[RMDB]
RNA sequence: GGGAACGACUCGAGUAGAGUCGAAAACGCUGGGCGAUUCGGGCAAUUUCCUGGACAUGAGCUAUACUGAAGCGCGCACGGUAUUGCUCAACAGCCAGGAAAUUGUCUCUAGCGUGAUCGCCUGUGCUGAAGCGCGCACGGCAACCGAAAGGUGCGACACGUCGCUAAAGUUCGCUUUAGCGACGUGAAAAGAAACAACAACAACAAC
Reactivity to 2A3 in 0.01 (KOAc 150mM, MgCl2 10mM, bicine 150mM(pH8.5), 24C), signal-to-noise 2, nucleotides 027 to 156: c060g010c010u040g000g000g030c020g050a050u050u100c080g030g000g020c000a000a000u010u010u010c000c000u020g000g030a080c180a300u210g000a000g030c020u020a010u000a000c000u020g030a270a070g020c040g000c000g010c050a010c040g010g000u030a010u000u050g050c000u010c010a080a060c090a060g060c000c000a000g000g000a000a000a000u010u000g000u000c000u010c000u020a060g020c060g100u110g020a020u010c010g000c000c000u030g090u110g000c040u080g030a070a020g010c000g000c020g050c000a020c010g050g000c040a150a130c040c020g060a070a010a020g030g010u010g040c000g000a010